[RMDB]
RNA sequence: GGGAACGACUCGAGUAGAGUCGAAAAAACUAUGACUCAACGUUCUGAGGGAUGUAUAUUUCACAGCGGGGUUUGGCAACUAAACUUCGAGAGGGUCAAGUAACGUAAAAGGCGUUGCUAGUGGGCAGUGCUGACCUCUGGACCGGCGAUCCGCGACGCCACAUAAAUAGUUCGCUAUUUAUGUGGCAAAAGAAACAACAACAACAAC
Reactivity to 2A3 in 0.01 (KOAc 150mM, MgCl2 10mM, bicine 150mM(pH8.5), 24C), signal-to-noise 3, nucleotides 027 to 156: a000a000c250u240a130u170g040a020c010u010c030a050a020c040g030u070u030c060u080g030a080g030g060g010a020u060g090u070a070u040a060u150u140u090c090a070c050a040g040c020g020g000g010g000u000u050u110g010g010c000a020a030c040u130a050a030a060c020u070u050c030g030a060g010a010g000g040g030u050c010a000a010g010u030a030a000c030g010u020a010a070a040a060g160g010c020g000u010u000g000c000u010a030g090u070g000g040g000c020a030g050u020g050c030u040g050a060c000c000u000c010u030g000g030a010c010c020g050g000c010g020a040u020c020c020g040c000g040a020c080
Reactivity to DMS in 0.01 (KOAc 150mM, MgCl2 10mM, bicine 150mM(pH8.5), 24C), signal-to-noise 2, nucleotides 027 to 156: a070a050c020u000a080u000g000a090c020u000c030a090a090c050g030u000u000c000u010g020a130g000g000g010a080u000g000u010a060u000a090u000u000u010c050a070c000a150g030c040g000g000g010g040u000u000u010g040g010c080a060a090c070u000a040a030a020c000u000u000c040g000a090g000a040g010g010g000u010c080a070a110g030u000a020a040c060g040u000a080a070a090a140g000g000c020g000u000u000g020c000u000a080g040u000g020g000g000c030a060g020u000g020c040u010g010a060c050c010u000c030u000g010g000a080c000c020g000g000c030g010a110u010c010c020g020c050g000a110c120